[RMDB]
RNA sequence: GGGAACGACUCGAGUAGAGUCGAAAAAGCCACUCGGCGGGAAGUUGAAAGGUGCGGCCCUGCUCGUCUUCCACGUCGGCGAGCCCGGCGUCCUCGUCGAGCACGUCAAUCACCAGCAAGGUGUCGGUACCACCAGGGUGUUCGCACCCUGGUGGUAAAAAGAAACAACAACAACAAC
Reactivity to DMS in 0.01 (KOAc 150mM, MgCl2 10mM, bicine 150mM(pH8.5), 24C), signal-to-noise 1, nucleotides 027 to 126: a110g000c000c000a160c070u000c000g000g000c000g010g000g000a120a000g030u000u040g000a030a030a120g000g000u030g010c090g000g030c010c000c000u020g000c040u040c060g000u080c030u000u000c010c190a010c100g120u000c090g000g000c110g000a150g000c000c050c010g060g020c000g050u000c090c240u000c000g030u000c050g000a030g020c120a000c240g060u000c080a100a130u030c030a090c000c000a100g060c200a100a050g000g000u040g070u040c030g000g000
Reactivity to 2A3 in 0.01 (KOAc 150mM, MgCl2 10mM, bicine 150mM(pH8.5), 24C), signal-to-noise 1, nucleotides 027 to 126: a000g010c000c000a000c040u070c000g020g060c000g100g000g000a210a040g010u200u190g150a100a130a000g040g020u110g180c080g030g040c000c030c040u090g000c030u000c000g020u030c000u040u040c010c000a030c080g180u190c030g000g020c070g010a000g000c040c000c000g000g000c010g070u140c020c000u060c010g050u060c000g000a020g000c000a040c150g050u030c040a030a100u020c000a000c010c000a000g000c160a230a000g020g010u010g000u090c040g000g100